[RMDB]
RNA sequence: GGGAACGACUCGAGUAGAGUCGAAAACGAGGUGCGGUAGGCCUCGUUAACAUACCGCAAAAAAAUAGUCGCAAACGACGAAAACUACGCACUCGCAGCUUAAUAACCUGCGCUGAGCCCUUCUCCCAAAACUGAGGUAGGUUCGCCUACCUCAGAAGUGUGUACGAAUGUUCGCAUUCGUACACACAAAAGAAACAACAACAACAAC
Reactivity to 2A3 in 0.01 (KOAc 150mM, MgCl2 10mM, bicine 150mM(pH8.5), 24C), signal-to-noise 1, nucleotides 027 to 156: c030g000a010g000g030u140g030c120g080g100u020a010g000g010c000c000u010c000g000u000u030a030a000c020a070u100a060c020c070g060c040a040a080a000a000a000a030a080u160a080g020u010c010g000c090a130a190a090c070g020a000c000g080a000a080a000a120c070u120a010c010g000c040a010c000u020c010g020c000a030g000c010u020u030a030a010u020a020a110c020c000u000g030c020g000c100u050g040a020g050c000c010c000u080u020c090u100c030c000c000a000a050a070a060c000u000g000a000g020g000u000a000g000g030u040u010c080g020c010c000u060a060c000c030u000c000a000g000a010a000